[RMDB]
RNA sequence: GGGAACGACUCGAGUAGAGUCGAAAAGUUUCAUCCUUCGGGAUGAAACAAAUAAAGUGACGCACGCGCGUCACUGGCAUCGAGUAGGUCGAGCCGCCUACAAAAUCGACGGGUUCGCCCGUCGAAACUAACCGAAUGUCUUCGGACAUUCGGUUAGAAAAGAAACAACAACAACAAC
Reactivity to DMS in 0.01 (KOAc 150mM, MgCl2 10mM, bicine 150mM(pH8.5), 24C), signal-to-noise 2, nucleotides 027 to 126: g000u000u010u000c000a000u000c000c000u000u020c150g030g000g010a030u000g000a000a010a000c020a020a070a060u000a060a050a020g000u000g000a020c000g030c000a120c300g010c250g040c010g000u000c000a000c010u010g000g020c150a100u000c150g000a110g000u000a020g000g010u000c020g000a120g000c010c040g000c000c000u000a040c070a080a020a160a080u010c010g010a000c000g000g010g030u000u000c260g000c000c000c000g030u000c000g000a000a000a190
Reactivity to 2A3 in 0.01 (KOAc 150mM, MgCl2 10mM, bicine 150mM(pH8.5), 24C), signal-to-noise 2, nucleotides 027 to 126: g000u010u020u000c000a000u000c000c010u030u060c190g090g010g000a000u000g020a000a000a000c000a000a020a000u140a010a090a010g010u000g000a000c000g000c040a030c060g300c030g000c000g060u000c000a010c000u010g020g000c050a160u080c110g030a030g050u070a060g060g110u050c050g050a020g030c050c040g000c000c000u030a040c010a000a090a020a110u030c010g000a000c000g000g040g000u050u050c200g120c040c010c000g000u000c000g000a000a000a000